[RMDB]
Chemical mapping of a 177-nucleotide RNA with DMS and 2A3. Source: RMDB libraries RFM100 and RFMREP, as collected in RNAgym.
RNA sequence: GGGAACGACUCGAGUAGAGUCGAAAAUGAAACCAAGCAGUGAAAACUUUAUAGGGCACUAAAGGAAUGAUCUCGAAAGAGGGACCGGUGUUCUAUAGUCCGUGUUGAAGAACGGGCCAGGGAGUUGCAGAUUAAUAUUAUUCGUAAUAUUAAUCUGAAAAGAAACAACAACAACAAC
Reactivity to DMS in 0.01 (KOAc 150mM, MgCl2 10mM, bicine 150mM(pH8.5), 24C), signal-to-noise 7, nucleotides 027 to 126: u020g010a120a100a210c010c010a100a110g020c110a090g010u000g000a100a080a060a040c020u000u000u000a020u000a010g010g000g000c000a010c010u000a070a100a150g010g010a300a150u020g000a040u020c000u010c000g000a090a100a180g000a030g000g000g000a030c020c020g010g010u000g010u010u000c000u000a010u010a010g000u010c010c010g010u000g000u020u030g010a100a100g010a060a020c010g010g000g010c010c030a070g000g000g000a050g000u000u010g020
Reactivity to 2A3 in 0.01 (KOAc 150mM, MgCl2 10mM, bicine 150mM(pH8.5), 24C), signal-to-noise 5, nucleotides 027 to 126: u140g010a030a010a010c010c010a030a030g090c050a040g040u090g190a100a080a040a020c000u050u040u020a020u010a020g000g000g000c020a000c020u180a180a120a160g030g030a090a220u020g010a010u000c000u000c010g030a080a080a040g000a010g010g000g000a000c000c000g020g000u000g000u000u000c000u000a000u000a000g010u020c010c020g010u030g070u140u200g130a120a070g020a050a000c000g000g020g020c010c000a090g050g020g020a020g000u060u100g000